[RMDB]
RNA sequence: GGGAACGACUCGAGUAGAGUCGAAAAGACUCAAUGACACAAUGAGGUACAUUCUGAUCGACUGGCUGGUGGAAGUUGCCACCAUGAAGGACUUCACAAGCCUGUGCCUGCACCUGACCGUGGAGUGACUCUAGACAUCGUUCGCGAUGUCUAGAGUAAAAGAAACAACAACAACAAC
Reactivity to 2A3 in 0.01 (KOAc 150mM, MgCl2 10mM, bicine 150mM(pH8.5), 24C), signal-to-noise 2, nucleotides 027 to 126: g040a000c010u000c010a020a130u140g040a050c040a010c020a130a210u180g040a040g020g070u100a030c010a060u090u060c030u100g070a150u060c060g070a070c050u100g000g090c010u020g030g030u100g050g040a050a100g070u060u120g180c020c010a020c000c020a040u050g040a050a050g030g020a020c030u020u000c010a000c030a090a050g000c000c010u010g010u000g030c040c040u030g030c030a030c040c020u040g030a050c020c010g050u040g060g040a040g070u050g040
Reactivity to DMS in 0.01 (KOAc 150mM, MgCl2 10mM, bicine 150mM(pH8.5), 24C), signal-to-noise 3, nucleotides 027 to 126: g000a090c010u000c010a090a120u010g010a130c070a020c070a080a100u010g010a050g020g030u000a090c080a120u010u010c070u000g030a150u000c080g020a170c040u000g000g020c040u010g000g010u010g020g010a050a090g020u020u000g010c030c030a090c050c020a050u000g010a090a070g010g000a070c010u010u000c040a040c070a090a090g010c010c030u010g020u000g000c050c030u010g010c050a060c020c060u000g030a090c090c090g020u000g010g010a100g000u000g000